RNA sequence: GGGAACGACUCGAGUAGAGUCGAAAAGAUAUGGACCAUGGUGGGAGCUCCACUCGGAAACGAGUGAAGAGCGUUGAUCACCCUGGUCCUAAGUCAAAAGAGGAUAUUUGUUCGCAAAUAUCCUCAAGGCUCUUAGUAUGUUCGCAUACUAAGAGCCAAAAGAAACAACAACAACAAC
Reactivity to DMS in 0.01 (KOAc 150mM, MgCl2 10mM, bicine 150mM(pH8.5), 24C), signal-to-noise 1, nucleotides 027 to 126: g000a000u000a040u010g010g000a010c010c000a000u000g000g020u000g000g010g010a030g000c000u000c020c020a000c000u000c000g020g010a010a000a020c010g050a010g030u010g000a200a190g000a020g000c000g050u010u020g000a040u010c000a020c000c010c110u000g010g110u000c000c010u000a000a060g000u000c000a150a160a200a110g000a030g000g000a030u000a000u000u000u000g020u000u030c220g030c000a000a020a020u000a020u000c000c000u000c000a020a070
Source information: Structure probing data (DMS) for a 177-nucleotide construct. For DMS, 1,364 sequencing reads were counted. Conditions: 150 mM KOAc, 10 mM MgCl2 and 150 mM bicine (pH 8.5), 24 C.